[RMDB]
RNA sequence: GGGAACGACUCGAGUAGAGUCGAAAAUGAGAUCGCUAAAUCACCUCGGUAUGAUUAGGGUGAGACCUAGGAACCGUAGGGGUAUUCUCAAAGGAAGCUUUUGCAGUGACGCCCAUGUAAGUGGGAUAAGAACCAACCCACUUCGGUGGGUUGGUAAGCUAUACUAUCUCUUCGGAGAUAGUAUAGCAAAAGAAACAACAACAACAAC
Reactivity to DMS in 0.01 (KOAc 150mM, MgCl2 10mM, bicine 150mM(pH8.5), 24C), signal-to-noise 2, nucleotides 027 to 156: u010g000a090g030a050u010c020g000c050u020a070a080a110u000c010a040c030c010u010c030g000g010u000a110u000g030a240u000u000a040g030g020g020u000g010a230g030a140c020c020u000a090g010g000a160a070c010c020g040u000a040g000g020g010g000u010a060u010u010c030u000c020a040a120a170g000g010a230a130g010c030u000u000u020u000g000c020a070g000u000g010a080c050g000c010c000c000a040u000g020u010a080a200g030u000g000g010g030a050u010a050a090g000a120a080c010c000a050a020c050c000c000a010c000u000u000c240g000g040u000g000g030g000u000u000g010g000u000a000a040
Reactivity to 2A3 in 0.01 (KOAc 150mM, MgCl2 10mM, bicine 150mM(pH8.5), 24C), signal-to-noise 3, nucleotides 027 to 156: u100g010a010g020a040u090c040g020c110u120a040a070a120u120c030a040c020c010u040c020g000g020u230a190u180g050a080u090u050a010g010g030g000u050g110a060g050a060c010c010u000a000g010g040a030a010c020c010g030u090a030g000g020g000g000u030a080u080u030c020u010c000a070a070a000g100g020a080a040g020c010u070u100u140u110g020c070a030g010u040g050a040c090g030c000c000c010a020u050g040u150a140a120g000u010g010g010g010a020u070a100a030g060a010a000c000c000a000a000c010c000c000a010c010u030u030c060g060g000u000g000g000g010u000u000g000g000u000a000a000